[RMDB]
RNA sequence: GGGAACGACUCGAGUAGAGUCGAAAAGAAUGCUGAGGCUCCAGCAUUGACUGCUCGGUAAUAUUUCUCUCGUCGAUGAACGUAACGAUCGUGCCAAUCUGGGAUGUCACUGGCAGCAAGGAUGACCUUCUCAUUAAGAUCACAAUCAAAGUCAGCGUCGAUUUUGAAGAUUCGUCUUCAAAAUCGAAAAAGAAACAACAACAACAAC
Reactivity to DMS in 0.01 (KOAc 150mM, MgCl2 10mM, bicine 150mM(pH8.5), 24C), signal-to-noise 1, nucleotides 027 to 156: g020a040a030u010g010c010u000g030a180g000g040c060u000c100c050a090g000c060a080u000u010g020a160c030u010g000c010u010c010g020g000u010a070a120u010a130u000u000u010c010u000c030u000c060g000u000c040g030a200u020g010a070a140c100g000u000a080a050c120g000a110u010c030g030u050g000c020c040a040a020u000c010u000g070g030g010a070u010g000u000c030a040c080u010g020g000c020a080g050c120a130a100g030g010a030u000g000a000c040c020u000u000c060u010c090a110u000u030a030a090g020a120u000c040a070c100a050a120u000c020a080a100a160g000u000c010a070g010c030g000
Reactivity to 2A3 in 0.01 (KOAc 150mM, MgCl2 10mM, bicine 150mM(pH8.5), 24C), signal-to-noise 3, nucleotides 027 to 156: g050a030a020u060g010c010u020g020a040g210g000c010u000c030c030a020g000c000a040u020u100g020a040c010u010g010c050u060c040g010g070u070a070a110u050a160u130u140u020c040u010c010u000c020g070u040c040g060a170u110g040a100a030c060g020u110a040a030c030g010a050u010c050g040u030g030c010c020a030a060u060c020u070g000g040g020a040u060g050u060c020a040c070u050g030g000c040a000g010c000a030a010g040g000a060u030g010a050c010c000u080u010c020u000c020a070u120u110a070a040g040a070u080c030a020c050a120a030u130c040a160a060a030g070u060c040a010g080c040g080
An RNA of 207 nucleotides, treated with DMS and 2A3 and read out base by base. For DMS the reverse transcriptase was MarathonRT. It was measured as part of the RMDB library OK3TST. Reactivities are given for positions 27 through 156. The reactions ran in a buffer of 150 mM KOAc, 10 mM MgCl2 and 150 mM bicine (pH 8.5), at 24 C.